[RMDB]
RNA sequence: GGGAACGACUCGAGUAGAGUCGAAAAUCAUGGCUGAUCUCUUGUCAUAGUGAAGUGUCUGGACAGACCUUCAUCGUUAUGGGAUCUCUGGUCCCCAGAGUGGGUGGCAAUGAAUGGGAGUGGACAAGCUCACCUGGGUGUAGGGGGCAGAGGGCCAUCAGGUAUACUGGUUCGCCAGUAUACCUGAAAAAGAAACAACAACAACAAC
Reactivity to 2A3 in 0.01 (KOAc 150mM, MgCl2 10mM, bicine 150mM(pH8.5), 24C), signal-to-noise 3, nucleotides 027 to 156: u120c010a040u040g010g000c030u040g010a060u030c010u000c050u150u130g050u100c000a040u080a090g010u000g000a000a010g070u050g030u300c020u050g070g270a070c080a100g000a000c000c000u000u000c000a020u060c040g070u050u050a080u090g030g000g020a070u020c000u010c000u020g140g020u110c030c010c000c020a020g130a030g040u040g020g020g020u060g000g000c050a050a100u140g090a100a070u120g080g010g000a090g060u110g000g070a020c040a120a000g000c000u000c020a060c000c030u000g000g060g000u110g000u050a120g010g010g000g000g030c010a010g010a030g000g010g000c010c000a030

This 207-nucleotide RNA was probed chemically with 2A3. Reactivities are given for positions 27 through 156. The RNA was probed in 150 mM KOAc, 10 mM MgCl2 and 150 mM bicine (pH 8.5) at 24 C. 2A3 is a SHAPE reagent: it acylates the 2'-hydroxyl of flexible nucleotides of all four kinds.